An RNA of 207 nucleotides, treated with 2A3 and read out base by base. It was measured as part of the RMDB library OK3TST. For 2A3 the reverse transcriptase was SuperScript II with manganese.
[RMDB]
RNA sequence: GGGAACGACUCGAGUAGAGUCGAAAAGGCGUAAUAGUACGUAUCAUGUCUGCAACUAAGAGAAUCUGAGACACUGAAGUAGGAACAGACUGUAUGACAAUCGUAGGCUUAGUGAAUUUUAUUUGUAGAAUUGGAAUUGAGGAUACAGUAACUUCACUAUGCGCAGUGUUUUCGAACACUGCGCAUAAAAAGAAACAACAACAACAAC
Reactivity to 2A3 in 0.01 (KOAc 150mM, MgCl2 10mM, bicine 150mM(pH8.5), 24C), signal-to-noise 2, nucleotides 027 to 156: g060g000c040g020u080a120a130u190a180g060u090a050c060g010u060a060u080c020a050u210g050u000c020u080g000c000a030a030c040u110a040a000g020a000g040a070a030u030c040u090g030a000g020a020c030a010c060u090g040a100a030g040u070a000g040g020a090a040c010a070g120a140c020u000g030u090a060u140g080a030c050a040a070u070c080g060u120a000g010g000c000u000u000a000g050u020g030a050a040u070u060u100u140a040u070u080u080g000u030a040g000a150a130u030u090g140g020a200a130u040u200g060a000g040g000a000u000a060c010a000g050u040a090a060c010u000u020c070a040c060